[RMDB]
RNA sequence: GGGAACGACUCGAGUAGAGUCGAAAACCAUGAAGACAAGUGAGAAACCACCUUCUGUCUACAGAAGGCAACAAUCCUGAAUAAACCUGGAAAUCUUUGUCUGACUUCAGACAGCUGAGUCUAAUCGAGGUCAGAUAACAUUCGUGUUAUCUGACCUAAAAGAAACAACAACAACAAC
Reactivity to 2A3 in 0.01 (KOAc 150mM, MgCl2 10mM, bicine 150mM(pH8.5), 24C), signal-to-noise 3, nucleotides 027 to 126: c000c000a060u150g110a030a040g020a020c000a020a030g080u060g070a080g080a130a110a010c050c000a010c010c000u000u010c000u000g130u090c050u020a040c070a010g000a010a000g010g110c010a010a000c000a020a090u060c020c010u060g130a090a080u240a140a170a050c070c040u070g000g010a080a020a060u050c020u010u070u000g000u020c020u040g050a080c000u110u090c040a050g000a080c030a040g080c060u110g010a000g010u000c010u050a040a140u170c130g060
Reactivity to DMS in 0.01 (KOAc 150mM, MgCl2 10mM, bicine 150mM(pH8.5), 24C), signal-to-noise 3, nucleotides 027 to 126: c000c000a070u060g020a130a010g000a030c040a030a030g030u010g010a080g020a080a090a150c130c170a160c000c020u000u010c000u040g000u010c130u030a110c010a000g010a000a020g010g010c050a020a090c210a110a100u010c000c000u030g000a150a070u030a050a110a150c170c070u010g030g000a020a080a070u000c020u010u000u010g020u000c010u000g000a100c040u010u010c040a010g000a010c140a110g000c060u040g000a070g020u010c010u020a150a110u020c080g000
Conditions: 150 mM KOAc, 10 mM MgCl2 and 150 mM bicine (pH 8.5), 24 C. An RNA of 177 nucleotides, treated with 2A3 and DMS and read out base by base. In probing experiments dimethyl sulfate is read out at A N1 and C N3, which are open when not base-paired. For DMS the reverse transcriptase was MarathonRT. Source: RMDB libraries RFM100 and RFMREP, as collected in RNAgym.